RNA sequence: GGGAACGACUCGAGUAGAGUCGAAAAUGAGUUAGGGAGGAGUCCCUCUUUUUCUAUUGUUUGGAAUCAUUUCAGAAGGAAUGGUACCAGCUCCUCUUUGUACCUCCGGUGGAAUUUGGCUAUGAACUGAAAAUGCUACCUUCGGGUAGCAUUUUCAAAAAGAAACAACAACAACAAC
Reactivity to DMS in 0.01 (KOAc 150mM, MgCl2 10mM, bicine 150mM(pH8.5), 24C), signal-to-noise 1, nucleotides 027 to 126: u020g020a060g040u000u060a010g010g030g000a000g020g010a010g000u010c020c050c030u010c010u010u020u010u040u100c120u010a080u020u010g010u000u020u000g000g040a100a010u000c010a040u020u000u010c000a130g020a150a070g000g000a040a040u000g010g040u000a050c020c070a020g020c000u000c000c040u010c020u000u040u000g000u050a010c110c020u000c000c080g030g040u010g010g010a020a120u100u040u000g020g000c010u000a120u000g010a100a060c160
Reactivity to 2A3 in 0.01 (KOAc 150mM, MgCl2 10mM, bicine 150mM(pH8.5), 24C), signal-to-noise 1, nucleotides 027 to 126: u170g010a010g150u000u300a080g010g010g000a010g030g000a030g030u040c010c000c020u080c000u030u050u000u030u140c000u230a220u100u170g000u000u040u100g010g010a000a040u080c060a050u000u060u030c170a270g090a300a140g200g030a000a010u010g140g000u070a100c000c000a000g030c000u000c000c000u070c030u070u070u010g070u030a040c000c000u100c000c000g000g010u020g050g000a060a120u030u110u110g060g000c070u070a090u230g030a140a030c000